This 177-nucleotide RNA was probed chemically with 2A3.
For 2A3 the reverse transcriptase was SuperScript II with manganese.
The RNA was probed in 150 mM KOAc, 10 mM MgCl2 and 150 mM bicine (pH 8.5) at 24 C.
RNA sequence: GGGAACGACUCGAGUAGAGUCGAAAACAGACCAAGUUCGCUUGGUCUGAAAGAAAGCGGAAAGCACCAGGGAGGGAAGGUGCGGCCCGCAACCACCCAUAAAAAGUACGAUCUUCGGAUCGUACAACCGUGAGCAUGGGUUCGCCCAUGCUCACGGAAAAGAAACAACAACAACAAC
Reactivity to 2A3 in 0.01 (KOAc 150mM, MgCl2 10mM, bicine 150mM(pH8.5), 24C), signal-to-noise 1, nucleotides 027 to 126: c010a010g000a000c000c010a010a000g000u030u040c150g000c180u010u000g000g040u000c000u000g010a020a000a000g060a010a070a030g000c000g000g050a050a030a000g020c000a000c010c000a020g100g060g040a140g030g060g010a000a130g020g010u000g000c000g000g010c000c000c010g000c000a000a000c020c020a020c010c000c010a040u200a050a110a000a000a000g000u030a000c000g000a010u000c000u020u020c220g040g000a000u000c000g000u000a000c000a000a010